[RMDB]
RNA sequence: GGGAACGACUCGAGUAGAGUCGAAAAGAAAGGUUCCAUGUGAACGGCACUUGCACAUGGGUAAGCCGAUCCUAAGGGACGGGGUAACCCCGGCAGACAGCGCGAUCUCGCGUGUUGCCCGAAAGGGCUUGUCCUCUACGUUCGCGUAGAGGACAAGAAAAGAAACAACAACAACAAC
Reactivity to 2A3 in 0.01 (KOAc 150mM, MgCl2 10mM, bicine 150mM(pH8.5), 24C), signal-to-noise 6, nucleotides 027 to 126: g080a020a080a000g050g000u070u000c000c020a020u040g030u010g040a110a070c050g130g030c070a060c090u070u240g010c020a010c010a010u030g000g050g030u080a070a010g020c000c010g030a100u020c010c000u020a100a100g090g010g040a020c010g010g020g010g040u080a110a160c010c000c000c000g040g000c010a030g030a100c030a060g030c020g000c000g060a170u100c090u110c120g010c020g000u050g070u110u110g020c000c010c000g050a050a050a010g000g010g000
Reactivity to DMS in 0.01 (KOAc 150mM, MgCl2 10mM, bicine 150mM(pH8.5), 24C), signal-to-noise 7, nucleotides 027 to 126: g010a060a130a140g010g010u000u020c000c000a040u000g010u000g010a070a080c090g010g010c040a060c070u030u020g000c020a010c030a020u000g000g000g000u010a120a120g020c000c000g000a120u000c000c000u010a080a100g010g000g000a090c040g000g000g000g030u030a130a110c070c010c010c060g010g000c090a090g000a090c090a100g020c020g010c010g000a170u030c190u020c040g000c030g020u000g000u010u000g000c000c010c010g000a090a080a140g000g000g010

An RNA of 177 nucleotides, treated with 2A3 and DMS and read out base by base. For 2A3 the reverse transcriptase was SuperScript II with manganese. It was measured as part of the RMDB libraries RFM100 and RFMREP. DMS adducts were read by reverse transcription with MarathonRT.